[RMDB]
RNA sequence: GGGAACGACUCGAGUAGAGUCGAAAAUGUCGUCUGAACCCCAUAGGUUGCGCUGCACAUCGAAAGGGUAACAAAUGUCCUGAGGCCUGGAGAUGUACCCGCUACGGAGAAUAAGAUGUUCAUGGUACCUGUUACGUAUGUUCGCAUACGUAACAGGAAAAGAAACAACAACAACAAC
Reactivity to 2A3 in 0.01 (KOAc 150mM, MgCl2 10mM, bicine 150mM(pH8.5), 24C), signal-to-noise 3, nucleotides 027 to 126: u050g040u020c010g010u010c020u020g070a080a090c010c020c030c010a050u110a070g090g030u060u070g000c060g000c060u050g000c050a000c000a080u030c030g010a080a000a030g020g030g030u060a030a020c040a050a160a050u220g070u120c030c060u100g060a070g030g130c020c020u040g070g000a090g010a020u010g020u020a020c010c000c010g030c040u030a020c070g100g030a070g030a100a010u120a080a020g020a020u050g050u070u070c040a060u060g040g080u060a090
Reactivity to DMS in 0.01 (KOAc 150mM, MgCl2 10mM, bicine 150mM(pH8.5), 24C), signal-to-noise 3, nucleotides 027 to 126: u000g010u020c030g010u000c030u000g010a090a150c100c020c010c060a090u000a090g000g020u000u010g020c050g020c060u000g000c060a030c030a030u000c010g010a100a200a110g010g000g010u000a070a090c090a090a120a070u010g010u000c020c050u000g010a120g000g020c030c000u010g000g000a230g010a060u000g000u000a070c040c250c010g000c060u000a060c050g010g000a050g010a030a070u000a140a080g010a070u000g000u000u000c020a020u000g010g010u000a100
An RNA of 177 nucleotides, treated with 2A3 and DMS and read out base by base. For 2A3, 2,560 sequencing reads were counted. Source: RMDB library OK2TRN, as collected in RNAgym. The RNA was probed in 150 mM KOAc, 10 mM MgCl2 and 150 mM bicine (pH 8.5) at 24 C. 2A3 adducts were read by reverse transcription with SuperScript II with manganese.